[RMDB]
RNA sequence: GGGAACGACUCGAGUAGAGUCGAAAAAGGGGGUGGGGGUGGCUCAACUUAUGGUCCACUGGAUGCCAUGGAUGUAGCUGGACCAGAUUCGACUGACCUCAACUUCGACCAUUUGGAUGAGCUGCCUUGUCGAUAUGAUAUUCGUAUCAUAUCGACAAAAAGAAACAACAACAACAAC
Reactivity to DMS in 0.01 (KOAc 150mM, MgCl2 10mM, bicine 150mM(pH8.5), 24C), signal-to-noise 2, nucleotides 027 to 126: a140g040g000g000g020g000u010g050g000g000g020g050u000g000g040c040u000c030a020a080c020u000u000a040u000g020g010u000c020c210a110c080u000g010g000a150u020g020c000c010a070u000g000g010a070u010g010u010a060g030c120u000g000g000a110c040c010a060g000a160u010u000c180g000a020c070u000g010a060c070c040u000c100a040a070c180u010u010c080g000a030c020c030a020u000u000u000g000g000a180u010g000a010g010c010u000g010c010c040u000
Reactivity to 2A3 in 0.01 (KOAc 150mM, MgCl2 10mM, bicine 150mM(pH8.5), 24C), signal-to-noise 1, nucleotides 027 to 126: a000g040g020g000g000g000u080g010g040g040g000g000u010g000g000c010u010c020a010a020c000u020u000a010u060g030g000u010c030c000a050c020u000g120g000a080u050g060c000c050a050u130g090g030a120u120g060u250a020g070c040u000g010g010a010c000c020a000g020a110u120u090c030g060a020c110u070g020a110c000c020u060c060a100a060c090u140u120c030g010a030c000c000a050u040u010u010g300g010a300u010g030a030g030c000u000g010c000c030u000